This 207-nucleotide RNA was probed chemically with 2A3. For 2A3 the reverse transcriptase was SuperScript II with manganese. The reactions ran in a buffer of 150 mM KOAc, 10 mM MgCl2 and 150 mM bicine (pH 8.5), at 24 C. The 2A3 profile rests on 942 reads. The data come from the RNA Mapping Database (RMDB), library M2RFPK.
[RMDB]
RNA sequence: GGGAACGACUCGAGUAGAGUCGAAAAAGGUGUGGAGCGACCUUAAACAGUUCUGGUGGUGCUCUGAAUGGAGUGCUCUACUGAGAUUAUAAAAUAGAAGGUAAUCUAUUAUCUCUUACAACAGGGCGAAGCACUCGGGGGUUCGCCCCCGAGUGAACUAUCGACGAUACUUCGGUAUCGUCGAUAGAAAAGAAACAACAACAACAAC
Reactivity to 2A3 in 0.01 (KOAc 150mM, MgCl2 10mM, bicine 150mM(pH8.5), 24C), signal-to-noise 2, nucleotides 027 to 156: a000g020g020u010g010u050g010g010a020g010c000g010a000c000c020u170u200a100a060a000c030a060g000u020u010c020u030g080g030u110g020g020u080g000c000u010c020u040g150a090a070u160g020g010a010g020u040g020c010u000c010u060a070c050u050g030a010g000a040u100u030a070u210a180a150a130a070u120a040g020a070a060g120g040u140a080a080u000c010u000a010u020u030a020u080c010u000c000u010u090a100c030a150a000c010a080g030g030g020c060g030a060a010g030c000a000c000u000c000g000g000g000g010g000u050u070c140g080c010c000c000c000c000g000a000g000u000g010a000a000